The data come from the RNA Mapping Database (RMDB), library TTRDEL. This 177-nucleotide RNA was probed chemically with DMS and 2A3.
RNA sequence: GGGAACGACUCGAGUAGAGUCGAAAAGAUAUGGACCCAGGAGGCUGAUGACCAUAUGGAGGCUCGGAAACGAGUGAAGUAUGCAAGGCUGACUGGGUCCUAAGUCAAACAGAGCUUCGGCUCUGAACGUUUCUAUAUCCUUCGGGAUAUAGAAACGAAAAGAAACAACAACAACAAC
Reactivity to DMS in 0.01 (KOAc 150mM, MgCl2 10mM, bicine 150mM(pH8.5), 24C), signal-to-noise 4, nucleotides 027 to 126: g020a030u000a230u000g000g000a030c010c000c010a020g000g010a300g010g000c010u000g010a070u010g000a140c300c010a000u000a000u010g000g000a220g010g000c000u000c020g010g010a040a080a090c000g000a010g030u000g010a210a150g000u000a020u000g000c030a040a080g010g030c000u010g010a300c000u000g000g010g010u000c000c000u000a010a030g000u010c030a130a070a230c020a010g000a020g000c000u000u010c180g010g010c000u000c000u000g000a050a120
Reactivity to 2A3 in 0.01 (KOAc 150mM, MgCl2 10mM, bicine 150mM(pH8.5), 24C), signal-to-noise 1, nucleotides 027 to 126: g020a010u050a020u060g000g000a000c000c050c010a010g000g010a020g000g000c010u010g030a300u140g010a120c020c060a000u010a010u030g090g030a130g300g000c040u010c010g030g030a050a060a030c020g000a010g030u140g030a110a000g030u000a000u010g020c030a150a210g000g000c000u000g030a030c010u000g000g000g000u000c000c010u020a000a010g000u000c000a000a000a010c000a010g000a000g010c020u110u130c280g140g000c000u000c000u000g020a070a000
The RNA was probed in 150 mM KOAc, 10 mM MgCl2 and 150 mM bicine (pH 8.5) at 24 C.
Reactivities are given for positions 27 through 126.
DMS (dimethyl sulfate) methylates the pairing face of unpaired adenines and cytosines.